Structure probing data (2A3 and DMS) for a 177-nucleotide construct.
2A3 adducts were read by reverse transcription with SuperScript II with manganese.
It was measured as part of the RMDB library OK1LIB.
Conditions: 150 mM KOAc, 10 mM MgCl2 and 150 mM bicine (pH 8.5), 24 C.
For 2A3, 2,159 sequencing reads were counted.
The DMS profile rests on 3,754 reads.
[RMDB]
RNA sequence: GGGAACGACUCGAGUAGAGUCGAAAACAGCGCCCUGGCAUGUUCGGGCGGGCGCCUUCGCCAUCGACGUGCUGCCCGGGCUCGCCGUGGCGGCGACCAUGGCGUUGACGGCUUUAACGGUGCCGCCUGCAUCCUGAUCAUUCGUGAUCAGGAUGCAAAAAGAAACAACAACAACAAC
Reactivity to 2A3 in 0.01 (KOAc 150mM, MgCl2 10mM, bicine 150mM(pH8.5), 24C), signal-to-noise 3, nucleotides 027 to 126: c020a010g050c010g040c050c020c000u030g050g020c110a070u160g030u040u030c040g010g030g020c000g060g030g000c010g010c000c030u100u130c060g030c030c010a100u120c070g040a050c010g010u130g090c020u020g000c010c000c000g060g030g000c100u050c080g010c010c000g000u250g070g000c080g020g000c020g020a020c030c000a080u100g020g010c020g010u040u080g040a040c040g030g050c050u120u070u230a120a040c080g050g020u030g010c000c020g000c000c000
Reactivity to DMS in 0.01 (KOAc 150mM, MgCl2 10mM, bicine 150mM(pH8.5), 24C), signal-to-noise 2, nucleotides 027 to 126: c030a080g010c070g000c020c010c010u020g020g020c090a070u010g010u010u020c020g000g000g030c020g030g000g030c000g020c060c080u000u040c120g000c030c050a130u020c040g000a080c250g010u000g000c000u030g010c020c030c000g000g010g020c090u020c110g050c000c000g020u000g000g020c020g000g000c030g000a080c070c040a050u000g000g020c010g000u010u000g000a100c120g010g010c020u000u020u030a070a130c190g000g000u030g000c010c030g000c030c000